[RMDB]
RNA sequence: GGGAACGACUCGAGUAGAGUCGAAAAGAUAUGGAGUGAACUACAGCGGAAGCAGCGAAGAACUCGGAAACGAGGGAGCUGAUAACGCUGCACUCCUAAGUCAAACACCGCUCUUCGGAGCGGUGAAUCAAUAGCAGGACUUCGGUCCUGCUAUUGAAAAAGAAACAACAACAACAAC
Reactivity to 2A3 in 0.01 (KOAc 150mM, MgCl2 10mM, bicine 150mM(pH8.5), 24C), signal-to-noise 2, nucleotides 027 to 126: g020a010u060a060u250g000g010a010g010u020g030a110a080c120u130a080c300a020g000c000g030g000a290a110g100c010a000g000c020g190a300a000g020a080a020c000u000c010g020g000a010a080a020c020g000a010g040g000g020a000g000c000u010g000a020u020a080a010c010g000c000u010g000c010a000c000u000c000c000u020a120a000g030u010c030a020a040a050c000a010c000c000g000c000u000c000u010u070c300g130g010a000g000c030g000g020u020g000a000a030
Reactivity to DMS in 0.01 (KOAc 150mM, MgCl2 10mM, bicine 150mM(pH8.5), 24C), signal-to-noise 2, nucleotides 027 to 126: g000a060u000a300u020g000g000a010g010u000g010a070a050c110u010a300c000a000g000c000g000g010a120a160g010c000a010g000c010g000a120a070g000a130a290c010u010c000g000g000a060a080a210c000g000a010g020g000g000a090g010c000u000g010a000u010a080a210c000g030c010u000g000c020a000c010u010c000c010u000a020a080g020u000c030a050a100a180c000a020c000c000g010c000u000c000u000u000c180g000g000a000g010c000g000g000u000g000a030a050